This 177-nucleotide RNA was probed chemically with 2A3 and DMS. For 2A3 the reverse transcriptase was SuperScript II with manganese. The RNA was probed in 150 mM KOAc, 10 mM MgCl2 and 150 mM bicine (pH 8.5) at 24 C.
RNA sequence: GGGAACGACUCGAGUAGAGUCGAAAAGGCACGCCAUGUCAAAAACGGACUGGAAUGCAUCCGGGCUCUCAAGGCCGAGCCCAUCGGCUCACUGGCCGUCGAGGAAGCCAUGGCAGCAUGGUCAGAAAUAAGACGCCGUAUUCGUACGGCGUCUUAUAAAAGAAACAACAACAACAAC
Reactivity to 2A3 in 0.01 (KOAc 150mM, MgCl2 10mM, bicine 150mM(pH8.5), 24C), signal-to-noise 1, nucleotides 027 to 126: g020g000c000a010c040g020c000c010a080u150g000u080c110a120a040a000a080a130c010g020g010a030c040u040g030g060a100a000u090g000c000a040u050c040c020g000g000g000c000u060c020u000c090a100a130g020g000c040c020g000a000g000c010c000c060a150u150c140g020g000c000u000c010a070c090u030g000g000c000c000g040u020c020g000a090g090g030a020a000g000c010c010a040u110g060g000c060a120g000c010a060u020g050g060u060c040a040g030a080a170
Reactivity to DMS in 0.01 (KOAc 150mM, MgCl2 10mM, bicine 150mM(pH8.5), 24C), signal-to-noise 3, nucleotides 027 to 126: g010g000c020a090c300g000c020c030a010u020g030u000c060a060a140a110a140a130c180g000g000a060c000u000g000g020a060a040u030g000c080a080u000c060c010g000g000g020c000u000c000u000c010a300a180g000g000c010c010g000a010g020c010c020c170a060u050c210g010g000c000u000c030a200c210u020g010g020c020c010g010u000c190g020a010g020g000a110a070g000c030c010a050u020g010g000c050a090g000c050a040u030g000g000u000c070a050g000a120a050